Source information: Structure probing data (2A3) for a 177-nucleotide construct. 2A3 adducts were read by reverse transcription with SuperScript II with manganese. The 2A3 profile rests on 509 reads.
[RMDB]
RNA sequence: GGGAACGACUCGAGUAGAGUCGAAAACGGACAAUCAUUGCCAGCGGAUAUGGCUAAGCGGACUAAUGCAUCAGUCAAUAGAUUUCAGGGAAAGAUCUAUUUAAUUUCUUUCACAUGGACCGUCAUAGGUCCCCAGCAGUUUCGACUGCUGGGGACCAAAAGAAACAACAACAACAAC
Reactivity to 2A3 in 0.01 (KOAc 150mM, MgCl2 10mM, bicine 150mM(pH8.5), 24C), signal-to-noise 2, nucleotides 027 to 126: c060g090g080a090c090a030a020u150c070a050u050u190g010c000c000a040g080c030g000g040a010u070a000u240g090g030c030u030a170a000g040c080g020g030a010c040u000a050a040u110g010c050a030u040c000a000g010u000c040a000a040u000a010g010a020u000u010u070c050a040g010g010g020a000a150a000g040a000u000c020u000a060u060u060u130a160a100u040u050u030c000u010u060u050c120a060c000a160u120g060g010a010c000c000g160u090c000a130u090a140